[RMDB]
RNA sequence: GGGAACGACUCGAGUAGAGUCGAAAAAGCUGUAGACAGGUGAGCAUGCUGGGCAAAGGGCAAAAGUGGCAAAAGACAGCCAGGGCAGUGGGCUGUUGCCAUAUCACGAAGGGCUGAGCUGAGGAGAUAUCCAAUAACAAUUCGUUGUUAUUGGAUAAAAAGAAACAACAACAACAAC
Reactivity to DMS in 0.01 (KOAc 150mM, MgCl2 10mM, bicine 150mM(pH8.5), 24C), signal-to-noise 9, nucleotides 027 to 126: a070g010c040u000g020u000a060g010a090c100a060g010g010u000g010a070g010c070a070u000g010c050u000g010g000g010c080a040a060a090g010g000g010c080a050a040a090a120g020u000g000g010c030a080a050a090a150g000a100c030a020g010c010c010a060g010g000g000c050a050g010u010g010g000g010c020u000g010u000u000g010c020c010a040u000a060u000c090a060c130g010a080a080g010g000g000c050u010g010a070g010c050u000g000a080g000g000a070g010a160
Reactivity to 2A3 in 0.01 (KOAc 150mM, MgCl2 10mM, bicine 150mM(pH8.5), 24C), signal-to-noise 5, nucleotides 027 to 126: a010g010c020u030g010u040a030g020a120c040a040g040g040u050g020a020g020c030a040u090g020c010u060g000g000g010c070a100a100a060g030g010g000c010a050a080a010a050g030u020g010g000c010a030a050a080a080g110a030c010a000g010c000c010a020g020g030g010c040a070g100u100g020g040g000c010u000g010u000u010g000c000c000a030u040a020u070c080a050c060g050a070a030g020g020g000c020u030g020a000g010c020u030g020a020g040g020a040g030a020
This 177-nucleotide RNA was probed chemically with DMS and 2A3. For 2A3 the reverse transcriptase was SuperScript II with manganese. For DMS the reverse transcriptase was MarathonRT. Conditions: 150 mM KOAc, 10 mM MgCl2 and 150 mM bicine (pH 8.5), 24 C. Source: RMDB library OK2TST, as collected in RNAgym. DMS (dimethyl sulfate) methylates the pairing face of unpaired adenines and cytosines. For 2A3, 12,882 sequencing reads were counted.